[RMDB]
An RNA of 177 nucleotides, treated with 2A3 and DMS and read out base by base. Reactivities are given for positions 27 through 126. In probing experiments dimethyl sulfate is read out at A N1 and C N3, which are open when not base-paired. Conditions: 150 mM KOAc, 10 mM MgCl2 and 150 mM bicine (pH 8.5), 24 C. For DMS, 5,580 sequencing reads were counted. It was measured as part of the RMDB library OK1LIB. High 2A3 reactivity points to a flexible backbone, as in loops and unpaired stretches.
RNA sequence: GGGAACGACUCGAGUAGAGUCGAAAAGAAAGCGCGAAAUGUAUAGAUGUUUAGGCAGACACUAUACAGAACAAUUUGCCUGAAACAAAGUGGACAAGGCUGUCUACAUGCCUGAAGCGCGAAGAAAGGGUAAUAGGUUGUUCGCAACCUAUUACCCAAAAGAAACAACAACAACAAC
Reactivity to 2A3 in 0.01 (KOAc 150mM, MgCl2 10mM, bicine 150mM(pH8.5), 24C), signal-to-noise 3, nucleotides 027 to 126: g050a000a060a000g030c010g000c010g030a100a030a050u120g010u010a000u020a020g220a190u000g100u000u070u080a120g020g020c070a030g010a000c010a000c020u010a010u010a020c020a020g060a050a000c050a060a100u070u060u050g010c020c050u060g070a100a020a000c070a000a170a010g060u020g040g020a050c020a090a050g110g000c110u010g000u020c030u050a030c030a050u160g000c000c000u000g030a040a010g010c010g000c040g050a020a000g120a040a050a000
Reactivity to DMS in 0.01 (KOAc 150mM, MgCl2 10mM, bicine 150mM(pH8.5), 24C), signal-to-noise 3, nucleotides 027 to 126: g020a090a070a090g000c010g020c000g060a060a140a050u020g000u000a010u000a010g000a110u000g010u000u000u000a020g010g050c090a060g020a010c010a030c000u000a010u010a000c000a060g010a120a050c180a090a070u010u010u010g000c000c040u000g020a080a140a130c140a000a060a040g040u010g020g010a080c040a040a050g000g010c120u030g000u040c030u010a060c050a050u000g000c010c010u000g020a150a150g020c000g000c010g000a050a090g000a070a050a080